[RMDB]
RNA sequence: GGGAACGACUCGAGUAGAGUCGAAAAGAUAUGGAGUCACUGCAGGGAGCGACGUGUCGGAAACGACAUGUUCGCGAAGAACUGUUGACUCCUAAGUCAAAGUCACUCAGCUUCGGCUGAGUGACAACAAUUCGAGUAUCUUCGGAUACUCGAAUUGAAAAGAAACAACAACAACAAC
Reactivity to 2A3 in 0.01 (KOAc 150mM, MgCl2 10mM, bicine 150mM(pH8.5), 24C), signal-to-noise 3, nucleotides 027 to 126: g000a010u010a010u050g020g000a010g000u000c030a020c170u220g040c070a020g020g030g050a180g030c010g010a010c010g000u000g010u000c010g000g000a020a000a000c000g000a000c010a010u030g060u160u090c000g000c000g010a090a020g020a010a010c010u030g050u130u020g040a000c000u000c000c000u000a010a000g000u010c030a110a080a030g000u000c000a000c000u000c000a000g040c010u090u270c300g190g000c020u020g000a000g000u010g000a000c000a000a000
Reactivity to DMS in 0.01 (KOAc 150mM, MgCl2 10mM, bicine 150mM(pH8.5), 24C), signal-to-noise 4, nucleotides 027 to 126: g020a010u000a020u030g000g000a020g020u000c000a020c300u010g010c040a010g010g010g010a030g040c000g020a020c020g010u010g010u000c000g010g000a010a000a030c010g020a020c000a000u000g000u020u000c000g030c000g020a090a080g010a220a300c000u000g020u000u010g010a010c000u000c000c000u000a000a070g020u020c010a170a080a140g000u000c000a000c000u000c000a000g010c000u000u000c250g020g030c000u000g000a010g000u000g010a000c000a030a090
This 177-nucleotide RNA was probed chemically with 2A3 and DMS.
The RNA was probed in 150 mM KOAc, 10 mM MgCl2 and 150 mM bicine (pH 8.5) at 24 C.
Reactivities are given for positions 27 through 126.
The data come from the RNA Mapping Database (RMDB), library TTRDES.
2A3 adducts were read by reverse transcription with SuperScript II with manganese.